[RMDB]
RNA sequence: GGGAACGACUCGAGUAGAGUCGAAAACACUUAGUGGAUGGCCCUGAUAACCAAAAAUUGGCAGAGAAUAUGAUCGUUAAGCACCAUAAUUUUACAAGGGUAAUCAAUCAUAUUGGCAAAUGGAUGGGUGCAUAAGGAGGUUCGCCUCCUUAUGCACAAAAGAAACAACAACAACAAC
Reactivity to 2A3 in 0.01 (KOAc 150mM, MgCl2 10mM, bicine 150mM(pH8.5), 24C), signal-to-noise 1, nucleotides 027 to 126: c010a000c060u090u130a090g030u010g100g040a110u100g160g000c020c000c000u040g180a180u070a130a060c020c050a000a000a000a090a060u080u000g040g000c030a000g010a030g000a300a000u030a040u040g000a070u060c010g020u030u040a030a090g060c000a060c030c000a020u110a160a230u210u170u170u040a030c040a040a060g090g050g000u010a020a070u010c000a000a030u050c020a010u010a010u040u000g100g010c000a030a030a000u040g000g000a030u030g070g000
Reactivity to DMS in 0.01 (KOAc 150mM, MgCl2 10mM, bicine 150mM(pH8.5), 24C), signal-to-noise 2, nucleotides 027 to 126: c020a080c070u010u030a060g040u010g040g000a170u000g000g000c020c000c010u000g000a150u010a070a300c010c010a000a030a070a180a050u010u000g010g020c020a140g020a110g030a050a050u000a010u000g020a030u000c060g000u000u000a080a110g040c150a050c000c020a030u000a060a100u000u000u020u010a100c180a080a130g000g010g000u000a020a010u010c020a080a020u000c020a000u010a030u000u000g010g010c020a030a030a010u000g000g010a300u000g000g000